[RMDB]
RNA sequence: GGGAACGACUCGAGUAGAGUCGAAAAGCUGCUGGGUAUCGCCAACCACGACGGCGACGGCGGAUCUUGGCCGAGCGUGGCAACCCUGGCACGCUAUGCCAACGUUGAGCCGCGUGCAGUCAAGGCGCAUGAAUUAGGUAUUCGUACCUAAUUCAUGAAAAGAAACAACAACAACAAC
Reactivity to 2A3 in 0.01 (KOAc 150mM, MgCl2 10mM, bicine 150mM(pH8.5), 24C), signal-to-noise 9, nucleotides 027 to 126: g060c040u110g020c030u080g050g000g020u080a060u090c010g000c010c010a040a030c030c040a080c120g150a040c010g060g020c010g190a280c020g040g000c000g030g070a090u040c030u030u050g010g000c010c030g010a010g000c010g000u010g020g030c020a070a240c050c030c110u030g100g040c000a000c010g000c000u020a030u060g000c000c000a020a020c090g040u050u100g060a020g000c000c000g010c010g000u050g070c060a060g010u020c040a050a080g010g000c020g010
Reactivity to DMS in 0.01 (KOAc 150mM, MgCl2 10mM, bicine 150mM(pH8.5), 24C), signal-to-noise 9, nucleotides 027 to 126: g010c050u000g010c040u010g010g010g020u000a080u000c010g010c010c010a170a100c080c050a110c150g010a080c030g010g010c000g000a070c090g010g010c010g010g000a050u000c130u000u000g000g010c010c070g000a030g000c010g020u000g010g000c020a040a130c220c170c200u000g010g000c000a010c020g010c010u000a050u000g000c000c000a010a020c180g010u000u010g000a240g020c000c010g010c020g020u000g010c030a060g000u000c060a110a150g010g000c040g010